An RNA of 177 nucleotides, treated with 2A3 and DMS and read out base by base.
The RNA was probed in 150 mM KOAc, 10 mM MgCl2 and 150 mM bicine (pH 8.5) at 24 C.
For DMS the reverse transcriptase was MarathonRT.
2A3 adducts were read by reverse transcription with SuperScript II with manganese.
It was measured as part of the RMDB library TTRDES.
RNA sequence: GGGAACGACUCGAGUAGAGUCGAAAAGAUAUGGAGGAUACAGCUAGCUCCCCACUCGGAAACGAGUGAAGAGCUUGGACCUGUAUUCCUCCUAAGUCAAAGGUUCUCCAGUUCGCUGGAGAACCAAUCCGAAUACUAUCUUCGGAUAGUAUUCGGAAAAAGAAACAACAACAACAAC
Reactivity to 2A3 in 0.01 (KOAc 150mM, MgCl2 10mM, bicine 150mM(pH8.5), 24C), signal-to-noise 2, nucleotides 027 to 126: g010a000u050a030u150g000g010a020g000g000a000u000a010c000a010g000c060u140a030g000c010u040c000c000c000c000a010c000u010c000g010g000a070a070a020c000g000a010g000u000g000a020a030g010a000g000c000u170u300g060g090a100c020c010u010g020u020a020u160u250c010c000u000c000c000u020a030a020g000u010c080a160a090a120g000g000u020u000c000u000c010c000a020g010u080u120c300g050c100u000g000g000a000g000a000a000c000c000a010a010
Reactivity to DMS in 0.01 (KOAc 150mM, MgCl2 10mM, bicine 150mM(pH8.5), 24C), signal-to-noise 3, nucleotides 027 to 126: g010a030u000a300u000g000g000a000g000g000a040u000a000c000a010g000c070u000a050g010c000u000c010c040c100c000a010c000u000c010g020g000a090a080a220c010g000a010g000u010g010a040a050g010a030g020c000u000u000g030g010a090c300c000u000g010u000a030u020u020c000c000u000c000c000u000a010a070g010u000c040a100a140a150g010g020u010u000c000u010c010c000a000g010u000u010c280g000c010u000g010g010a010g010a000a010c000c010a040a010